This 177-nucleotide RNA was probed chemically with 2A3 and DMS. The reactions ran in a buffer of 150 mM KOAc, 10 mM MgCl2 and 150 mM bicine (pH 8.5), at 24 C. The data come from the RNA Mapping Database (RMDB), library OK2TRN.
[RMDB]
RNA sequence: GGGAACGACUCGAGUAGAGUCGAAAAGACGCCAUCGAUCAUCUGCAUGUCGUUCACCUUGCCGCUGCGGAACGACAGGCGCAAGGUGUCGAAGAGGGUGUCCUUGGUCUUCGGCUUGAGCACGAAAACUCAGCAUGGUAUUCGUACCAUGCUGAGUAAAAGAAACAACAACAACAAC
Reactivity to 2A3 in 0.01 (KOAc 150mM, MgCl2 10mM, bicine 150mM(pH8.5), 24C), signal-to-noise 3, nucleotides 027 to 126: g060a020c050g020c020c010a050u010c000g020a030u180c020a000u000c030u070g020c040a050u110g030u070c000g000u030u070c030a120c030c000u030u060g070c070c070g090c070u090g020c070g130g070a130a030c040g130a060c030a040g030g050c030g000c070a090a020g000g000u000g020u000c020g000a040a000g100a090g130g010g000u020g010u010c020c010u000u050g050g010u020c030u040u040c040g010g000c020u020u070g050a040g040c090a040c090g040a010a120a020
Reactivity to DMS in 0.01 (KOAc 150mM, MgCl2 10mM, bicine 150mM(pH8.5), 24C), signal-to-noise 3, nucleotides 027 to 126: g010a050c090g010c010c000a180u000c010g000a020u020c040a070u010c010u000g000c060a130u000g000u000c010g000u000u000c020a060c060c040u000u000g030c050c080g000c060u000g000c190g000g000a030a080c060g010a040c020a030g020g010c130g030c080a090a020g020g010u000g000u000c020g000a030a060g020a180g010g000g020u000g010u000c010c050u000u000g010g010u000c040u000u000c020g020g010c010u000u010g000a080g020c060a080c090g010a080a050a080